[RMDB]
RNA sequence: GGGAACGACUCGAGUAGAGUCGAAAAGAAUUAAGAUCCUAGUUGCCGAAAGGCGCAUAGCUUCCGCUUGUACUAGUCGUCCAUCACGAAAAGUGAUGGGGUCAUUCGCGAGGUGACCGACUAGGUAGGUUGCUAUGCCUAGGUUGACCUCGCGUCCCAGUACCUGGAGGUUCGCCUCCAGGUACUGAAAAGAAACAACAACAACAAC
Reactivity to 2A3 in 0.01 (KOAc 150mM, MgCl2 10mM, bicine 150mM(pH8.5), 24C), signal-to-noise 2, nucleotides 027 to 156: g030a020a020u240u190a100a050g010a060u040c000c000u050a050g050u300u080g020c010c020g060a040a040a040g010g000c000g000c020a000u000a000g000c010u040u010c000c030g170c210u180u230g070u110a150c010u000a010g000u000c030g050u010c010c000a000u000c000a000c020g080a190a130a150a120g000u000g000a010u010g000g000g020g010u000c000a000u020u040c000g000c000g010a000g000g000u010g010a020c050c020g010a000c020u010a000g010g000u050a020g000g020u000u030g010c000u000a000u000g020c000c000u000a000g020g000u040u080g020a070c000c000u000c010g000c000g000u010c000c000
Reactivity to DMS in 0.01 (KOAc 150mM, MgCl2 10mM, bicine 150mM(pH8.5), 24C), signal-to-noise 1, nucleotides 027 to 156: g030a130a190u010u010a080a160g000a160u010c020c010u000a110g020u000u000g020c020c010g010a120a110a170g020g020c020g070c030a040u000a020g000c000u000u000c020c000g010c250u000u000g040u000a090c010u010a030g000u000c020g010u000c000c010a010u000c000a020c010g000a070a070a080a230g040u000g010a030u000g010g020g040g030u000c030a060u000u020c030g060c010g030a050g020g000u000g020a030c030c030g040a030c010u000a010g000g020u010a060g040g000u000u010g010c000u010a020u000g000c000c010u000a040g000g040u000u000g000a110c020c020u000c000g010c020g010u010c060c030
Chemical mapping of a 207-nucleotide RNA with 2A3 and DMS. The 2A3 profile rests on 1,526 reads. In probing experiments dimethyl sulfate is read out at A N1 and C N3, which are open when not base-paired. 2A3 adducts were read by reverse transcription with SuperScript II with manganese. The RNA was probed in 150 mM KOAc, 10 mM MgCl2 and 150 mM bicine (pH 8.5) at 24 C.